[RMDB]
RNA sequence: GGGAACGACUCGAGUAGAGUCGAAAACUAGAAUUCGUUCUAGCGCUAGGGGUCCAUCGAUCUCGAUUACAGCAACAGCCAUACUGAAGCCUCCACGGUAUGGACAUGCUGUACUCGAGGGAGGACGGAGGCACCCGUCCCAGUCGUUCGCGACUAAUUAAUUCUACAGAUUCGUCUGUAGAAUUAAAAAAGAAACAACAACAACAAC
Reactivity to DMS in 0.01 (KOAc 150mM, MgCl2 10mM, bicine 150mM(pH8.5), 24C), signal-to-noise 2, nucleotides 027 to 156: c010u000a000g000a020a060u000u030c270g020u000u010c000u010a030g010c040g020c120u000a090g000g010g020g030u000c010c020a160u000c100g010a190u000c000u000c010g020a050u000u000a040c000a080g010c010a080a140c050a170g000c000c000a020u000a020c000u010g000a050a120g030c010c020u000c010c030a300c020g020g000u000a030u000g000g000a050c060a160u020g020c000u000g010u000a000c100u010c000g000a030g000g000g020a170g010g010a030c030g050g020a060g040g060c010a300c020c000c030g000u000c000c040c000a200g010u000c010g000u000u000c080g040c050g030a300c050u010a000a300
Reactivity to 2A3 in 0.01 (KOAc 150mM, MgCl2 10mM, bicine 150mM(pH8.5), 24C), signal-to-noise 3, nucleotides 027 to 156: c010u000a000g010a020a050u110u120c210g030u050u010c020u000a010g020c020g030c120u160a100g000g020g000g030u010c020c010a060u290c050g030a050u010c010u010c010g010a010u050u000a000c000a000g080c130a160a090c040a180g010c020c000a000u010a010c010u040g080a250a060g040c010c010u010c010c020a050c010g000g000u000a000u010g000g030a010c020a090u230g000c000u000g000u000a000c010u000c000g000a000g000g000g010a050g000g000a020c020g020g010a020g010g010c010a030c010c010c020g000u040c000c010c010a000g020u010c010g030u030u080c240g020c030g140a020c010u040a000a050
This 207-nucleotide RNA was probed chemically with DMS and 2A3. The reactions ran in a buffer of 150 mM KOAc, 10 mM MgCl2 and 150 mM bicine (pH 8.5), at 24 C. 2A3 adducts were read by reverse transcription with SuperScript II with manganese.